Chemical mapping of a 177-nucleotide RNA with 2A3 and DMS. The RNA was probed in 150 mM KOAc, 10 mM MgCl2 and 150 mM bicine (pH 8.5) at 24 C. It was measured as part of the RMDB library TTRDEL. 2A3 adducts were read by reverse transcription with SuperScript II with manganese. For DMS, 7,735 sequencing reads were counted. DMS adducts were read by reverse transcription with MarathonRT. 2A3 is a SHAPE reagent: it acylates the 2'-hydroxyl of flexible nucleotides of all four kinds.
RNA sequence: GGGAACGACUCGAGUAGAGUCGAAAAGAUAUGGAUCAGGUACUGUAGGACGAGGAUCUCGGAAACGAGGGAGUCCCGUACUGAUCCUAAGUCAAAACCGUGGGUCUUGUUCGCAAGACCCACGGAACAACAUCAAACUGUUCGCAGUUUGAUGUUGAAAAGAAACAACAACAACAAC
Reactivity to 2A3 in 0.01 (KOAc 150mM, MgCl2 10mM, bicine 150mM(pH8.5), 24C), signal-to-noise 6, nucleotides 027 to 126: g030a010u070a030u170g000g000a010u000c020a020g200g150u110a030c050u240g250u300a130g020g020a010c010g090a240g070g000a010u010c010u000c010g010g030a080a080a020c010g000a000g000g010g010a010g020u000c000c030c000g000u000a010c000u010g000a000u000c000c000u000a080a020g050u040c040a020a010a130a200c000c000g000u010g000g000g020u000c010u010u030g050u120u150c300g000c160a000a000g000a000c030c000c000a000c000g000g000a010a000
Reactivity to DMS in 0.01 (KOAc 150mM, MgCl2 10mM, bicine 150mM(pH8.5), 24C), signal-to-noise 5, nucleotides 027 to 126: g000a030u000a300u010g010g000a000u000c000a020g010g010u000a010c020u010g060u010a080g030g000a020c000g010a080g020g000a030u000c000u010c000g000g010a120a100a210c000g010a010g000g000g010a050g020u000c000c000c050g010u000a020c000u000g000a010u000c000c000u000a010a070g000u000c020a080a060a090a140c000c000g030u000g000g010g000u000c000u010u000g000u000u010c220g000c010a010a010g020a010c000c000c000a010c000g000g000a010a060